[RMDB]
RNA sequence: GGGAACGACUCGAGUAGAGUCGAAAAUUUAUUUUUUACACGGAAACAAUGCCACAGUUGACUGAACCUGUCUUCUAACAGUAGUUAAUUGCCAGUGUUUCAAACAAGAUUUGAAAUACGAGUUUCCUGUCAGUCUUAUUUUCGAAUAAGACUGACAAAAAGAAACAACAACAACAAC
Reactivity to DMS in 0.01 (KOAc 150mM, MgCl2 10mM, bicine 150mM(pH8.5), 24C), signal-to-noise 4, nucleotides 027 to 126: u010u010u040a030u000u010u030u010u020u040a120c130a100c130g000g000a060a010a030c010a130a070u000g010c130c130a270c040a050g020u010u000g000a020c010u000g000a070a100c240c010u000g000u000c110u000u020c210u010a100a050c020a060g020u000a040g000u000u000a020a020u000u000g010c130c070a100g000u000g010u000u000u000c000a000a020a030c040a110a120g010a300u000u000u000g010a010a010a010u010a010c000g000a150g000u010u000u000c000c010
Reactivity to 2A3 in 0.01 (KOAc 150mM, MgCl2 10mM, bicine 150mM(pH8.5), 24C), signal-to-noise 6, nucleotides 027 to 126: u030u040u030a110u040u110u010u020u060u050a090c070a030c090g010g030a010a030a010c020a080a120u100g060c030c040a030c010a000g010u010u000g020a030c010u030g050a040a080c040c010u030g010u030c050u140u080c040u170a080a010c010a020g050u070a010g000u000u030a010a030u040u030g060c040c030a040g010u000g000u000u000u010c010a010a000a010c060a100a120g130a290u000u000u000g000a000a000a000u020a020c050g020a010g050u000u000u010c000c000